[RMDB]
RNA sequence: GGGAACGACUCGAGUAGAGUCGAAAAUGACGCCACUUCGAGAUGGUAAAGGAGUAAUUUCUGGCUGGCGGUUUGCCCAAAUAACGAUGGGAGUCACGGAAGACUUUGACAUUGCCGGCAAGCUCCUGCGCGUACAAAAAGCCAAUGGUUGGGCAACGUACGUAAGAAACUUCGGUUUCUUACGUACAAAAGAAACAACAACAACAAC
Reactivity to DMS in 0.01 (KOAc 150mM, MgCl2 10mM, bicine 150mM(pH8.5), 24C), signal-to-noise 1, nucleotides 027 to 156: u000g000a040c000g000c000c080a080c060u000u010c080g000a150g030a150u000g020g020u010a060a100a110g030g010a100g000u000a080a120u000u000u000c030u000g010g010c030u000g040g040c050g050g000u000u000u000g040c050c000c020a080a120a230u010a140a030c080g010a170u000g010g030g000a060g010u010c020a280c090g000g000a090a270g000a060c020u000u000u030g020a140c050a070u000u000g020c000c000g070g000c050a020a100g000c010u010c010c090u000g000c160g000c000g020u000a150c080a010a050a080a020a100g010c000c030a060a130u000g060g000u000u010g030g000g040c020a040a100c140
Reactivity to 2A3 in 0.01 (KOAc 150mM, MgCl2 10mM, bicine 150mM(pH8.5), 24C), signal-to-noise 2, nucleotides 027 to 156: u130g050a060c010g000c000c000a030c050u100u090c150g140a150g030a160u150g090g020u070a040a090a080g060g010a020g070u050a050a150u140u120u080c090u030g080g030c020u030g000g040c010g010g060u050u130u070g020c000c000c010a010a090a020u150a090a000c100g040a030u060g000g020g020a010g030u040c030a000c180g200g030a110a030g040a040c010u040u110u070g080a070c080a090u040u190g060c000c000g000g040c030a010a000g000c000u010c010c000u020g000c100g000c010g030u080a020c090a000a110a030a080a030g030c020c010a050a030u110g090g000u010u030g050g000g010c000a010a010c020
The record gives the reactivity of an RNA of 207 nucleotides to DMS and 2A3. It was measured as part of the RMDB library OK3TST. The reactions ran in a buffer of 150 mM KOAc, 10 mM MgCl2 and 150 mM bicine (pH 8.5), at 24 C. DMS adducts were read by reverse transcription with MarathonRT. Reactivities are given for positions 27 through 156.